This 177-nucleotide RNA was probed chemically with DMS and 2A3.
High DMS reactivity at an A or C suggests that its Watson-Crick edge is free.
For 2A3 the reverse transcriptase was SuperScript II with manganese.
Values cover nucleotides 27 to 126.
It was measured as part of the RMDB libraries RFM100 and RFMREP.
Values are in units of 0.01, from 0 to 300, in steps of 10.
The reactions ran in a buffer of 150 mM KOAc, 10 mM MgCl2 and 150 mM bicine (pH 8.5), at 24 C.
RNA sequence: GGGAACGACUCGAGUAGAGUCGAAAAGAAAGAAAGAAAGUAUCCCUAUGAAGAAUGAACUGAUAUUUCAAUUAAAAGUAGUGGGCUGAUCUCCAUUGAUGAUCACUAACCAAUUCUGAGGGAUGAAGAUCAGUAACAUGUUCGCAUGUUACUGAUCAAAAGAAACAACAACAACAAC
Reactivity to DMS in 0.01 (KOAc 150mM, MgCl2 10mM, bicine 150mM(pH8.5), 24C), signal-to-noise 9, nucleotides 027 to 126: g010a110a090a110g010a090a100a050g000a110a090a120g000u010a050u000c000c010c000u010a230u040g010a070a030g010a050a030u000g000a080a080c130u000g010a150u020a040u010u020u020c090a060a080u030u020a030a080a140a100g000u010a070g020u010g000g000g000c190u010g000a030u010c070u020c100c280a110u020u010g000a030u030g000a020u010c020a020c090u020a050a090c070c090a060a060u010u000c000u000g000a040g010g000g000a020u000g010a060a070
Reactivity to 2A3 in 0.01 (KOAc 150mM, MgCl2 10mM, bicine 150mM(pH8.5), 24C), signal-to-noise 9, nucleotides 027 to 126: g080a010a060a010g110a050a060a010g090a060a110a000g080u080a030u010c010c000c000u050a210u120g060a030a030g020a030a070u110g010a050a030c040u050g070a040u060a100u140u180u060c080a080a090u080u170a070a090a050a040g070u130a030g050u090g040g060g000c120u050g040a040u010c030u050c080c050a110u050u200g040a040u090g000a000u040c010a010c020u050a060a060c020c030a030a020u040u000c020u040g050a030g000g000g010a000u040g030a050a010